[RMDB]
RNA sequence: GGGAACGACUCGAGUAGAGUCGAAAAGCUGCUUGUGAUUCCAUAGCUGGGCUCCGCGCCUGAGCACUGGUCACCCCUUCCCCUGGCUCCACUGGUGUGAGGGGCGGGCGCCAAGAAGCCGAAUGGGUGCAAGUGUAUCUUUCGAGAUACACUUGCAAAAAGAAACAACAACAACAAC
Reactivity to DMS in 0.01 (KOAc 150mM, MgCl2 10mM, bicine 150mM(pH8.5), 24C), signal-to-noise 2, nucleotides 027 to 126: g010c070u000g000c050u000u000g020u000g000a130u010u010c030c010a040u010a150g010c010u000g000g010g020c010u000c010c030g000c040g010c020c000u010g010a300g020c010a060c070u010g000g010u010c130a190c140c030c030c010u020u030c040c020c020c160u000g000g000c080u010c130c150a080c040u010g020g030u000g010u000g010a290g000g000g000g020c190g000g000g020c120g000c000c000a080a060g050a080a050g020c000c070g000a120a070u000g000g000g040